An RNA of 177 nucleotides, treated with 2A3 and DMS and read out base by base. The 2A3 profile rests on 67,168 reads. For DMS the reverse transcriptase was MarathonRT. The RNA was probed in 150 mM KOAc, 10 mM MgCl2 and 150 mM bicine (pH 8.5) at 24 C. The data come from the RNA Mapping Database (RMDB), library OK1LIB. Values cover nucleotides 27 to 126. For 2A3 the reverse transcriptase was SuperScript II with manganese.

[RMDB]
RNA sequence: GGGAACGACUCGAGUAGAGUCGAAAAGGCUUGGAUUGCGUUGAGCACGACGCGCCCAAGUUCGUCGUCGCCUCCGCUGCGCAAGCCGCGCACUUCGAUCCAGGCGCGACGCUCGCCACGCCAACAGUGUUAGAAAUCAAUUCGUUGAUUUCUAACAAAAAGAAACAACAACAACAAC
Reactivity to 2A3 in 0.01 (KOAc 150mM, MgCl2 10mM, bicine 150mM(pH8.5), 24C), signal-to-noise 9, nucleotides 027 to 126: g050g010c010u010u010g010g030a090u110u290g020c020g020u040u080g050a050g080c080a070c140g030a000c000g020c000g010c020c020c010a040a030g020u060u080c010g010u010c000g060u070c060g020c010c010u040c030c030g030c060u040g000c040g000c040a070a060g110c070c030g000c010g000c000a080c040u140u150c090g090a110u050c060c040a020g020g000c010g000c010g020a010c020g010c010u020c010g040c010c010a070c050g030c020c000a060a060c040a100g050
Reactivity to DMS in 0.01 (KOAc 150mM, MgCl2 10mM, bicine 150mM(pH8.5), 24C), signal-to-noise 9, nucleotides 027 to 126: g010g000c010u000u010g000g000a050u010u040g020c020g010u000u010g020a180g020c170a100c070g000a010c020g010c070g020c060c050c050a060a070g000u010u010c030g000u000c020g000u020c060g020c060c020u000c100c050g000c230u000g010c020g010c040a090a110g010c120c130g000c040g020c040a040c120u010u020c070g000a070u000c080c170a070g000g010c020g010c020g000a050c020g020c120u010c050g020c020c020a070c090g000c030c040a080a110c170a090g010